[RMDB]
RNA sequence: GGGAACGACUCGAGUAGAGUCGAAAAAGAGUCACGUUGAGACUGGCACAAGUCCCUGGUGUGUCUGAGGAUCUUCAACAGCCCAAAUGCUAGGGGCUUGUACAUAUAACGGAAUGUCCUAUGCCGAUACAGUAAGCCUCUUCGGAGGCUUACUGUAAAAAGAAACAACAACAACAAC
Reactivity to DMS in 0.01 (KOAc 150mM, MgCl2 10mM, bicine 150mM(pH8.5), 24C), signal-to-noise 1, nucleotides 027 to 126: a100g020a070g000u020c070a080c090g020u000u000g020a100g020a110c300u000g000g010c070a000c010a020a020g020u000c000c000c000u000g000g040u000g000u010g020u000c180u000g010a090g010g010a110u010c120u030u000c180a080a070c190a130g000c050c020c070a070a100a080u000g020c000u000a000g000g010g020g020c000u000u020g000u020a020c040a020u000a110u000a070a130c040g020g000a100a050u000g010u020c030c000u000a120u000g000c030c100g000a260